[RMDB]
RNA sequence: GGGAACGACUCGAGUAGAGUCGAAAAUUAAAGUUGAAAAAUCUGUAGUUCAUAGCAAAGAAGAUGCGACUGUUGAAGAUGAUGCAUCCACAGCCAAGUUGUCUAAGAAAAAGCGAUUUCCCCUACCUGAGGUUGGAGUGCAAGAGACAUUGUCCACGCUAUUAUGUGAGUUCGCUCACAUAAUAGCAAAAGAAACAACAACAACAAC
Reactivity to 2A3 in 0.01 (KOAc 150mM, MgCl2 10mM, bicine 150mM(pH8.5), 24C), signal-to-noise 1, nucleotides 027 to 156: u080u040a070a000a000g020u010u030g090a130a020a000a000a020u030c070u030g010u050a080g040u100u160c090a150u050a000g000c000a020a070a020g050a070a030g000a050u020g040c100g130a030c080u090g080u110u040g040a060a040g030a060u080g000a030u140g000c000a010u040c070c000a110c050a040g040c060c000a060a010g040u080u030g010u010c040u120a060a010g090a120a190a060a040a010g050c040g030a020u000u000u050c000c010c030c020u060a090c010c010u010g010a080g130g000u030u020g020g070a050g010u040g040c050a110a030g050a020g000a000c010a110u090u130g050u020c000c040a040c070
Reactivity to DMS in 0.01 (KOAc 150mM, MgCl2 10mM, bicine 150mM(pH8.5), 24C), signal-to-noise 2, nucleotides 027 to 156: u000u000a080a080a090g010u000u010g000a030a090a070a110a090u000c020u010g020u000a140g030u000u010c060a100u000a090g010c100a080a100a120g010a130a080g000a080u010g030c070g030a050c020u000g000u000u000g010a050a060g030a070u000g020a100u000g020c050a090u000c070c000a050c060a020g050c020c010a050a250g020u030u000g010u000c050u020a110a130g000a010a050a050a070a080g010c080g040a150u000u000u000c020c000c000c040u010a090c020c000u010g020a040g030g020u000u000g020g020a080g030u000g000c020a000a050g000a140g010a020c060a070u000u010g000u000c010c050a120c230